The record gives the reactivity of an RNA of 207 nucleotides to DMS and 2A3. The DMS profile rests on 3,126 reads. For 2A3 the reverse transcriptase was SuperScript II with manganese. For 2A3, 3,740 sequencing reads were counted.

RNA sequence: GGGAACGACUCGAGUAGAGUCGAAAAUGUGAUGGCAACAACAAGCUCAAGAUCAGCGUCAAGUGCCUCAAAAAUAGCAUCGCUUGCGAAUCUUGGAGGGACAAAGACAACUGCCGCAUUCGCAUCUUCAGUUCUGACAGCUGCAUCAACCGUAUUACACCUCCUAAGUUUUCGAACUUAGGAGGUGAAAAGAAACAACAACAACAAC
Reactivity to DMS in 0.01 (KOAc 150mM, MgCl2 10mM, bicine 150mM(pH8.5), 24C), signal-to-noise 2, nucleotides 027 to 156: u020g040u000g010a080u000g050g030c000a070a120c050a050a130c130a140a150g010c020u030c050a030a060g010a110u010c060a150g050c100g030u000c060a090a150g030u000g030c000c020u000c010a020a030a120a050a120u000a090g040c030a050u010c120g040c190u010u010g050c000g020a080a050u000c030u000u020g040g020a070g000g010g000a260c110a100a110a100g000a100c050a030a130c030u020g000c010c040g000c080a170u000u000c070g030c000a090u000c000u010u000c050a060g010u000u000c030u010g000a050c110a070g020c000u000g040c010a100u000c020a040a000c030c000g020u000a060u000u000a210
Reactivity to 2A3 in 0.01 (KOAc 150mM, MgCl2 10mM, bicine 150mM(pH8.5), 24C), signal-to-noise 5, nucleotides 027 to 156: u130g030u050g010a050u070g040g020c020a040a030c010a020a020c020a050a100g020c020u030c050a020a030g020a060u060c050a020g030c000g120u100c020a040a090g030u040g080c020c020u060c010a070a120a020a020a020u090a040g020c030a040u120c080g010c130u020u060g020c020g050a040a030u030c030u040u080g050g020a040g020g030g020a020c070a080a100a000g070a030c050a070a080c080u080g020c000c030g040c040a060u080u080c050g010c030a030u020c020u090u070c040a040g020u050u010c020u050g020a030c030a050g000c010u040g010c010a020u020c030a020a100c030c040g010u050a060u140u220a040